This 177-nucleotide RNA was probed chemically with 2A3 and DMS. The DMS profile rests on 5,314 reads. The 2A3 profile rests on 4,744 reads. Conditions: 150 mM KOAc, 10 mM MgCl2 and 150 mM bicine (pH 8.5), 24 C. It was measured as part of the RMDB library OK2TRN.
RNA sequence: GGGAACGACUCGAGUAGAGUCGAAAAAAAUACGAUUUCUUCAACUAUUGGACCUACAAUCACAAUUAAUAAGAAUGCUACAGGUAAAAAUGCAGGCACUUCAAACAUUUUAUUUAGCUCAAGUUCAACGUAAAUGAUUAUUCGUAAUCAUUUACGUAAAAGAAACAACAACAACAAC
Reactivity to 2A3 in 0.01 (KOAc 150mM, MgCl2 10mM, bicine 150mM(pH8.5), 24C), signal-to-noise 3, nucleotides 027 to 126: a010a000a000u150a020c020g050a040u050u060u000c020u070u060c040a080a050c050u100a050u100u060g020g000a020c020c010u030a040c100a040a050u050c030a020c020a160a120u110u130a050a070u130a110a040g020a060a030u030g010c010u040a030c020a040g000g060u050a050a120a050a030a030u070g010c030a020g040g000c020a020c050u050u040c030a020a110a110c020a050u050u060u050u110a110u020u110u120a020g020c020u020c070a090a060g040u140u110c020a020
Reactivity to DMS in 0.01 (KOAc 150mM, MgCl2 10mM, bicine 150mM(pH8.5), 24C), signal-to-noise 5, nucleotides 027 to 126: a050a040a040u020a060c110g010a110u010u000u000c020u010u000c090a080a080c130u000a070u000u000g020g010a070c040c010u020a060c150a080a090u000c080a040c080a060a050u010u010a040a060u010a070a060g010a050a060u010g010c040u000a040c120a050g010g010u000a010a070a080a110a080u010g000c030a040g000g020c030a020c080u010u000c060a070a070a080c070a040u000u000u000u000a060u000u020u000a060g000c030u000c080a040a090g000u000u000c090a090